An RNA of 177 nucleotides, treated with 2A3 and DMS and read out base by base. For 2A3 the reverse transcriptase was SuperScript II with manganese. The data come from the RNA Mapping Database (RMDB), libraries RFM100 and RFMREP. DMS adducts were read by reverse transcription with MarathonRT. High DMS reactivity at an A or C suggests that its Watson-Crick edge is free.
RNA sequence: GGGAACGACUCGAGUAGAGUCGAAAAAGGGACGGAUCCGGCGGGACGAACGACCCUCGUUCCCUGGUCCGGCGGCGCGUCGCCGGUUUGGGCUUCUCUCCUUUGCGCGGAGACGCAUGAGAACCUCGUAAGACGAUUAUUUCGAUAAUCGUCUUACAAAAGAAACAACAACAACAAC
Reactivity to 2A3 in 0.01 (KOAc 150mM, MgCl2 10mM, bicine 150mM(pH8.5), 24C), signal-to-noise 9, nucleotides 027 to 126: a000g070g010g020a020c030g010g010a060u090c040c020g020g020c110g020g010g020a020c020g010a100a020c070g120a110c020c010c010u010c000g010u020u020c000c000c010u010g030g010u010c000c000g010g010c010g030g000c050g010c040g100u070c010g010c010c000g010g000u020u050u020g030g000g000c030u160u040c050u040c020u030c040c020u060u080u080g020c190g000c010g030g020a050g020a040c010g010c020a050u100g050a020g010a080a060c010c020u060c040
Reactivity to DMS in 0.01 (KOAc 150mM, MgCl2 10mM, bicine 150mM(pH8.5), 24C), signal-to-noise 7, nucleotides 027 to 126: a050g020g010g000a120c020g010g000a100u010c020c000g020g030c190g010g000g000a050c070g010a050a080c080g000a130c080c070c040u000c020g000u000u000c000c000c000u020g010g010u010c010c010g010g010c050g010g000c120g010c100g010u010c020g010c010c010g000g000u000u010u020g000g010g010c200u010u010c080u010c080u000c040c090u010u000u010g000c040g010c040g010g000a100g010a070c050g030c020a060u010g000a090g000a080a100c040c020u010c220
Description:
Conditions: 150 mM KOAc, 10 mM MgCl2 and 150 mM bicine (pH 8.5), 24 C.